[RMDB]
RNA sequence: GGGAACGACUCGAGUAGAGUCGAAAAGAUAUGGACCACUGCACCUAGCGACGAUCUAGGGUCGGAAACGACCCUAGGGAGCUACGUGUUGGUCCUAAGUCAAAAGUAACGGCUUCGGCCGUUACAACCCUUAACCUCGGUUCGCCGAGGUUAAGGGAAAAGAAACAACAACAACAAC
Reactivity to DMS in 0.01 (KOAc 150mM, MgCl2 10mM, bicine 150mM(pH8.5), 24C), signal-to-noise 2, nucleotides 027 to 126: g000a010u000a010u030g000g000a010c000c000a190c300u000g010c010a030c030c050u000a010g060c010g000a080c300g020a020u020c000u000a000g000g020g030u000c000g010g020a010a010a000c000g000a000c010c000c000u010a000g000g010g010a000g020c000u010a020c300g010u000g020u000u000g010g000u000c010c000u010a000a060g010u000c010a110a070a110a170g020u000a030a000c000g000g000c000u000u010c210g020g000c000c000g010u000u000a000c010a060a110
Reactivity to 2A3 in 0.01 (KOAc 150mM, MgCl2 10mM, bicine 150mM(pH8.5), 24C), signal-to-noise 2, nucleotides 027 to 126: g000a000u030a010u060g000g000a000c000c020a030c040u040g010c020a040c030c040u050a000g020c000g300a300c010g010a130u000c000u000a010g000g000g000u000c000g000g000a010a000a010c000g010a010c030c010c040u000a010g000g030g000a000g010c010u010a010c030g030u010g030u080u190g000g010u000c000c000u010a010a000g010u010c040a110a000a010a130g000u000a010a000c020g000g040c030u060u200c300g170g020c000c000g000u000u020a000c000a000a010

Description
Structure probing data (DMS and 2A3) for a 177-nucleotide construct. For DMS, 1,673 sequencing reads were counted. For 2A3, 4,054 sequencing reads were counted. The data come from the RNA Mapping Database (RMDB), library TTRDES. For DMS the reverse transcriptase was MarathonRT.